This 177-nucleotide RNA was probed chemically with DMS. The data come from the RNA Mapping Database (RMDB), library TTRDEL. The RNA was probed in 150 mM KOAc, 10 mM MgCl2 and 150 mM bicine (pH 8.5) at 24 C.
[RMDB]
RNA sequence: GGGAACGACUCGAGUAGAGUCGAAAAGAUAUGGACUUAUCUUGAGCUAUGCAUCGGAAACGAUGUAAAUAGCAAUGAUGGAGUAAGUCCUAAGUCAAAGGCAGGGGUAGUUCGCUACCCCUGCCAAUCAUUCAGAUCCGUUCGCGGAUCUGAAUGAAAAAGAAACAACAACAACAAC
Reactivity to DMS in 0.01 (KOAc 150mM, MgCl2 10mM, bicine 150mM(pH8.5), 24C), signal-to-noise 1, nucleotides 027 to 126: g000a010u010a050u000g000g000a020c000u000u000a010u000c000u010u000g000a040g010c000u000a020u000g010c000a000u000c000g000g000a000a020a030c010g000a010u000g010u010a030a100a090u000a010g010c000a300a300u000g000a070u000g000g000a010g000u000a000a000g010u000c000c000u000a010a070g010u000c000a150a080a070g000g000c000a000g010g000g010g070u000a000g010u010u010c160g010c000u030a000c000c000c000c000u000g000c020c000a010a000